[RMDB]
RNA sequence: GGGAACGACUCGAGUAGAGUCGAAAAGAUAUGGAAGAAACUGGCUCUGCCGAAGAACUCGGAAACGAGGGAGGCAGAGAACUACCAGCGAAUCUUCCUAAGUCAAACCUACUCUUCGGAGUAGGAACACUCAUUAGUUGUUCGCAACUAAUGAGUGAAAAGAAACAACAACAACAAC
Reactivity to 2A3 in 0.01 (KOAc 150mM, MgCl2 10mM, bicine 150mM(pH8.5), 24C), signal-to-noise 3, nucleotides 027 to 126: g010a020u100a030u170g010g000a010a010g000a010a190a010c010u010g000g020c000u000c010u000g000c010c000g160a190a030g020a050a020c000u010c010g010g020a090a090a050c010g010a000g050g000g030a010g010g000c000a000g010a010g000a000a000c010u070a010c000c010a000g000c050g120a100a090u000c000u000u000c000c000u010a110a010g050u020c000a040a020a100c000c010u000a000c000u000c010u060u120c300g180g000a010g000u000a000g000g010a000a010
Reactivity to DMS in 0.01 (KOAc 150mM, MgCl2 10mM, bicine 150mM(pH8.5), 24C), signal-to-noise 3, nucleotides 027 to 126: g010a040u010a300u010g000g010a010a000g020a030a100a080c000u010g000g020c000u000c000u000g010c010c010g000a100a110g000a080a150c000u000c000g000g010a120a080a130c010g000a010g000g000g000a050g000g010c000a000g000a000g000a020a010c080u010a300c030c020a000g000c040g000a180a050u000c000u000u000c000c000u010a030a120g040u010c020a090a080a140c010c000u000a010c000u000c000u000u010c190g020g000a010g010u000a000g010g010a070a120